[RMDB]
RNA sequence: GGGAACGACUCGAGUAGAGUCGAAAACGGUGAAGCUGUCGCAUCGCUACAUCUCCGGCCGCCAGUUGCCGGACAAGGCGAUCAGCGUGCUCGACACCGCCUGCGCGCGGGUCGCCCUCGGCCAGCACUAGGGAGUCACGUUCGCGUGACUCCCUAGAAAAGAAACAACAACAACAAC
Reactivity to 2A3 in 0.01 (KOAc 150mM, MgCl2 10mM, bicine 150mM(pH8.5), 24C), signal-to-noise 1, nucleotides 027 to 126: c040g050g010u030g040a100a040g000c050u050g050u080c010g040c030a030u020c030g020c070u080a050c040a130u100c030u000c050c000g050g010c010c010g110c060c010a060g030u210u090g070c030c000g000g060a030c020a010a010g020g000c020g030a020u000c030a030g030c000g020u020g000c010u010c050g000a090c060a140c080c040g040c030c000u040g010c060g000c020g000c000g000g030g000u010c010g000c040c040c020u070c020g020g000c010c000a050g000c040a010
Reactivity to DMS in 0.01 (KOAc 150mM, MgCl2 10mM, bicine 150mM(pH8.5), 24C), signal-to-noise 2, nucleotides 027 to 126: c020g010g040u010g020a130a070g030c030u010g000u000c100g010c030a090u000c070g030c030u000a070c180a160u030c150u000c000c050g000g010c010c050g000c100c080a110g010u000u010g010c020c000g000g000a020c230a040a070g030g010c000g030a010u000c050a100g000c000g000u000g010c070u000c080g000a150c030a180c180c140g020c050c040u000g010c080g000c070g010c040g010g000g030u000c000g000c020c040c040u000c050g000g010c000c030a020g020c040a200
About this RNA: Chemical mapping of a 177-nucleotide RNA with 2A3 and DMS. For 2A3, 1,620 sequencing reads were counted. For DMS, 1,172 sequencing reads were counted. Conditions: 150 mM KOAc, 10 mM MgCl2 and 150 mM bicine (pH 8.5), 24 C.